Chemical mapping of a 177-nucleotide RNA with 2A3 and DMS. For DMS the reverse transcriptase was MarathonRT. The RNA was probed in 150 mM KOAc, 10 mM MgCl2 and 150 mM bicine (pH 8.5) at 24 C. For 2A3, 1,889 sequencing reads were counted. It was measured as part of the RMDB library M2PK50.
RNA sequence: GGGAACGACUCGAGUAGAGUCGAAAAGUGGAUAGUUUCGACUAUCCACACAACUCAUGAUCUUACAGUGGAGGAUGAAGAAGAUGGCCAUCGGAUCCUCAAAUAGCACAGAGUUCGCUCUGUGCAAGCGAAUUUCUUAUUUCGAUAAGAAAUUCGCAAAAGAAACAACAACAACAAC
Reactivity to 2A3 in 0.01 (KOAc 150mM, MgCl2 10mM, bicine 150mM(pH8.5), 24C), signal-to-noise 2, nucleotides 027 to 126: g010u010g000g020a000u010a000g010u000u070u150c210g030a020c000u020a000u020c000c010a000c000a000c010a010a040c000u070c050a060u110g180a130u050c070u120u210a120c090a080g070u140g180g040a030g050g020a030u050g040a120a130g000a060a030g030a110u130g130g000c040c000a020u040c050g070g050a020u010c000c000u050c030a060a080a090u140a010g000c000a000c000a000g000a000g010u020u070c130g020c040u000c000u020g000u000g000c000a000a000
Reactivity to DMS in 0.01 (KOAc 150mM, MgCl2 10mM, bicine 150mM(pH8.5), 24C), signal-to-noise 1, nucleotides 027 to 126: g000u000g000g000a020u000a020g000u010u000u000c180g040a030c000u000a020u000c000c010a010c040a010c110a060a090c070u010c060a040u000g010a170u000c010u000u000a090c090a120g020u030g000g000a040g000g010a050u010g000a150a170g000a070a040g000a030u010g000g020c020c040a040u000c040g000g000a090u000c010c020u010c040a050a110a090u010a040g000c000a000c000a000g010a020g030u010u000c290g010c000u000c000u010g000u000g010c000a040a030